[RMDB]
RNA sequence: GGGAACGACUCGAGUAGAGUCGAAAAUGAAUCCAGCAAGCACCCCAAAUCCGACUGCAAGUAGUAUAGGAAGACCGGUAAAGUUAAGUUUAACAACUUCAGAUAUUGCUAGCAUGACCGUACCAUAGUCAUAUGGUUCUUUCGAGAACCAUAUGACAAAAGAAACAACAACAACAAC
Reactivity to DMS in 0.01 (KOAc 150mM, MgCl2 10mM, bicine 150mM(pH8.5), 24C), signal-to-noise 3, nucleotides 027 to 126: u020g000a120a080u030c060c010a110g000c100a090a130g000c020a110c030c000c010c010a080a070a090u020c050c020g020a090c050u040g010c030a040a030g040u010a010g020u030a040u020a050g000g020a060a030g010a110c090c210g010g030u000a040a020a090g010u030u040a090a120g010u000u020u010a050a070c010a110a050c000u000u000c040a050g000a050u000a030u010u010g000c000u000a050g000c010a020u020g010a070c110c050g010u010a050c120c050a080u020a180
Reactivity to 2A3 in 0.01 (KOAc 150mM, MgCl2 10mM, bicine 150mM(pH8.5), 24C), signal-to-noise 6, nucleotides 027 to 126: u120g040a020a040u030c020c010a010g040c050a060a020g030c020a070c010c010c000c020a020a070a040u050c000c010g020a030c030u030g000c010a050a010g020u050a020g010u030a050u040a040g060g030a020a030g050a060c040c090g090g080u140a170a020a020g050u090u140a060a070g030u050u080u100a080a040c070a030a020c020u020u030c010a010g020a140u040a020u030u050g020c020u020a030g020c010a020u120g050a090c000c080g020u070a050c010c020a090u110a060
Chemical mapping of a 177-nucleotide RNA with DMS and 2A3. Reactivities are given for positions 27 through 126. The reactions ran in a buffer of 150 mM KOAc, 10 mM MgCl2 and 150 mM bicine (pH 8.5), at 24 C. The data come from the RNA Mapping Database (RMDB), library OK1LIB. 2A3 adducts were read by reverse transcription with SuperScript II with manganese. DMS adducts were read by reverse transcription with MarathonRT.